[RMDB]
RNA sequence: GGGAACGACUCGAGUAGAGUCGAAAACGCCCGUCGGAAGGACUCAGCGUGGUGAUGGCGGGCAGUCGCCGCCCUUGCCGGGGCGGUCAUGCCGCUUAGCCUUCGGCGUCCGGGAGUUACCGCUCUCCAGACUAGAAAGGUUCGCCUUUCUAGUCUGAAAAGAAACAACAACAACAAC
Reactivity to 2A3 in 0.01 (KOAc 150mM, MgCl2 10mM, bicine 150mM(pH8.5), 24C), signal-to-noise 2, nucleotides 027 to 126: c030g060c000c020c010g090u070c030g070g110a120a070g020g010a070c010u030c140a050g090c050g110u130g020g060u070g030a150u160g070g070c100g060g080g000c030a000g010u030c040g000c020c000g010c000c010c000u050u090g150c080c090g010g000g020g000c000g000g000u000c000a020u050g020c000c000g010c010u020u080a020g000c000c000u110u090c030g070g030c010g000u010c010c000g030g000g010a000g000u090u130a100c020c030g020c020u030c010u020c010
Reactivity to DMS in 0.01 (KOAc 150mM, MgCl2 10mM, bicine 150mM(pH8.5), 24C), signal-to-noise 3, nucleotides 027 to 126: c270g010c000c010c020g010u000c070g010g020a130a060g000g000a060c050u010c090a150g020c050g010u010g010g010u000g000a130u010g000g010c020g020g010g030c030a010g000u000c250g010c000c000g010c010c010c000u000u010g030c300c270g000g000g030g040c000g010g010u000c070a080u000g010c000c000g000c020u000u010a300g010c010c020u000u000c020g000g010c090g000u010c050c030g000g020g010a070g010u010u010a110c180c090g010c060u000c010u000c040
Chemical mapping of a 177-nucleotide RNA with 2A3 and DMS. The 2A3 profile rests on 2,464 reads.